[RMDB]
Conditions: 150 mM KOAc, 10 mM MgCl2 and 150 mM bicine (pH 8.5), 24 C. Structure probing data (DMS and 2A3) for a 177-nucleotide construct. Reactivities are given for positions 27 through 126. The 2A3 profile rests on 2,948 reads.

RNA sequence: GGGAACGACUCGAGUAGAGUCGAAAAUAAAAGGACAACGUAAUGCGCCUCUGCAACCUCCAGCUGGUGUUGUCUGGGAACCUGAUCAAAACUACCGAGUUUGAUCAGGCCAAUGCAGAGAAAAAAAGAAUCAUAUUCACUUCGGUGAAUAUGAUUCAAAAGAAACAACAACAACAAC
Reactivity to DMS in 0.01 (KOAc 150mM, MgCl2 10mM, bicine 150mM(pH8.5), 24C), signal-to-noise 3, nucleotides 027 to 126: u010a040a080a070a130g010g000a030c010a010a030c030g020u000a110a100u000g020c110g000c160c000u000c010u000g010c030a050a090c100c070u010c020c040a100g000c090u010g000g010u000g010u000u000g000u010c000u030g000g000g000a100a270c000c000u000g000a010u000c000a010a010a020a030c030u000a210c270c210g000a100g000u000u010u000g000a010u000c000a020g000g010c030c060a050a090u000g000c010a010g010a040g010a020a000a060a070a080a060a140
Reactivity to 2A3 in 0.01 (KOAc 150mM, MgCl2 10mM, bicine 150mM(pH8.5), 24C), signal-to-noise 2, nucleotides 027 to 126: u060a000a060a020a010g040g000a020c020a040a010c090g070u110a120a050u170g070c030g050c030c000u000c010u020g000c010a030a090c010c040u010c010c030a020g020c040u080g020g080u090g060u110u040g020u000c020u020g000g020g000a020a050c010c010u000g010a000u000c020a010a050a040a110c030u150a190c110c100g120a080g140u000u000u000g000a000u000c000a000g000g000c020c010a000a000u010g000c000a000g030a020g000a100a040a000a000a000a000a010